The data come from the RNA Mapping Database (RMDB), library RSTRND.
Chemical mapping of a 207-nucleotide RNA with 2A3 and DMS.
For DMS, 2,789 sequencing reads were counted.
DMS adducts were read by reverse transcription with MarathonRT.
Values are in units of 0.01, from 0 to 300, in steps of 10.
Values cover nucleotides 27 to 156.
The reactions ran in a buffer of 150 mM KOAc, 10 mM MgCl2 and 150 mM bicine (pH 8.5), at 24 C.
For 2A3, 3,514 sequencing reads were counted.
[RMDB]
RNA sequence: GGGAACGACUCGAGUAGAGUCGAAAAGAAGACAAGAAACUUGAUCUUCAAUUUGUGAUGAACUCACAAACACAACAAAAUCUACUAUUUGCUUAAUAAAUCGUAGUCAGGCGAAUAUAUUAGUUUCAAAUAUUUGCUUUGUCGCUUAGGAACUAUGCAUAAAUCUCAUCUUCGGAUGAGAUUUAUGAAAAGAAACAACAACAACAAC
Reactivity to 2A3 in 0.01 (KOAc 150mM, MgCl2 10mM, bicine 150mM(pH8.5), 24C), signal-to-noise 6, nucleotides 027 to 156: g000a000a010g010a000c020a010a010g180a250a300a140c100u080u070g030a210u170c010u000u000c010a050a110u010u010u010g000u010g000a060u120g040a070a080c020u000c010a000c000a010a040a020c080a010c020a140a100c020a020a090a010a070u040c010u010a010c000u020a050u030u030u020g030c020u100u210a100a070u170a210a160a010u030c030g000u000a010g020u000c020a010g010g000c000g010a010a000u030a010u030a070u110u150a050g030u010u060u060c010a020a090a000u030a010u010u020u010g000c000u150u110u110g090u150c100g050c160u090u140a030g020g040a040a050c020u040a090u200g010
Reactivity to DMS in 0.01 (KOAc 150mM, MgCl2 10mM, bicine 150mM(pH8.5), 24C), signal-to-noise 2, nucleotides 027 to 156: g000a030a030g010a050c010a070a090g020a100a010a050c010u000u000g010a170u010c000u000u000c010a180a110u000u000u000g000u000g000a040u000g000a230a300c170u010c000a010c000a030a030a020c080a150c040a090a100c060a040a050a080a080u010c040u020a070c070u000a190u010u000u010g000c080u000u000a120a100u000a060a050a100u000c070g000u000a060g020u000c100a020g040g040c010g030a000a010u000a010u000a010u010u000a040g000u000u010u000c020a010a110a120u000a020u000u000u000g010c000u000u000u000g030u000c000g000c020u000u020a080g010g000a030a070c010u000a060u000g010